Annotation:
The record gives the reactivity of an RNA of 177 nucleotides to 2A3 and DMS. For 2A3 the reverse transcriptase was SuperScript II with manganese. The RNA was probed in 150 mM KOAc, 10 mM MgCl2 and 150 mM bicine (pH 8.5) at 24 C. Reactivities are given for positions 27 through 126.
[RMDB]
RNA sequence: GGGAACGACUCGAGUAGAGUCGAAAAGUCAACAACGCCGCGUUCGCCGGACACCCGGAACAGGGUGGGUGGACCGCGGUCCAGCUUGCCGAGCGGCGUGGCGAGGCGUGGUUCGAUCCAGACGGCCCAUCCGGAGGAAUUUCGAUUCCUCCGGAUGAAAAGAAACAACAACAACAAC
Reactivity to 2A3 in 0.01 (KOAc 150mM, MgCl2 10mM, bicine 150mM(pH8.5), 24C), signal-to-noise 2, nucleotides 027 to 126: g020u030c010a000a040c030a090a080c120g010c020c000g020c000g110u180u230c000g000c000c000g030g030a040c000a010c010c020c000g030g050a230a140c100a130g020g000g010u030g030g030g030u040g020g010a010c000c020g040c150g060g000u000c000c010a040g020c030u120u140g030c030c000g070a090g000c000g000g000c000g010u030g000g000c040g000a010g010g000c130g090u080g000g030u090u200c040g010a060u040c010c010a050g040a070c040g060g030c000c020
Reactivity to DMS in 0.01 (KOAc 150mM, MgCl2 10mM, bicine 150mM(pH8.5), 24C), signal-to-noise 3, nucleotides 027 to 126: g000u010c040a100a100c060a100a140c020g000c000c000g040c020g000u000u000c010g030c000c020g010g000a240c050a020c010c010c010g000g000a100a150c300a140g000g000g010u000g010g010g010u000g010g000a000c000c030g030c300g070g000u010c010c000a030g000c060u000u000g020c020c010g010a140g020c010g000g000c000g010u000g000g000c010g010a050g000g010c060g030u000g010g000u000u000c080g000a100u000c030c050a200g000a120c080g000g010c050c020